RNA sequence: GGGAACGACUCGAGUAGAGUCGAAAACCGAAGCAACUUCAGGUCGCCGCGCACGAACUGGCGCUCGAGCUCCGCCUCGCUCGAGUCGGUUUCCCCGGGGAUCCCUCUUCGCGCCCUUGCCACCAUACAGGUAAGUCACGUAGUGUAUUCCCCAGAGCCUUCUAAAUCUCUUCGGAGAUUUAGAAGGAAAAGAAACAACAACAACAAC
Reactivity to 2A3 in 0.01 (KOAc 150mM, MgCl2 10mM, bicine 150mM(pH8.5), 24C), signal-to-noise 2, nucleotides 027 to 156: c010c020g020a070a020g020c140a090a170c080u160u150c080a080g000g030u040c020g020c040c040g080c070g050c000a120c140g130a240a080c120u150g040g000c050g010c020u000c020g090a060g000c010u050c060c000g000c010c000u010c000g000c000u000c000g010a010g000u000c010g020g000u010u040u010c000c000c010c030g000g020g020g010a010u070c060c020c000u050c010u040u040c020g000c010g030c050c010c010u010u020g030c010c000a200c020c030a090u260a300c060a060g010g040u040a000a020g040u090c020a000c050g040u060a020g010u020g010u060a140u110u090c020c000c000c000a000g000a030g050
Source: RMDB library VIROID, as collected in RNAgym. Structure probing data (2A3) for a 207-nucleotide construct. The reactions ran in a buffer of 150 mM KOAc, 10 mM MgCl2 and 150 mM bicine (pH 8.5), at 24 C. Reactivities are rounded to 0.1 and cut off at 0 and 3.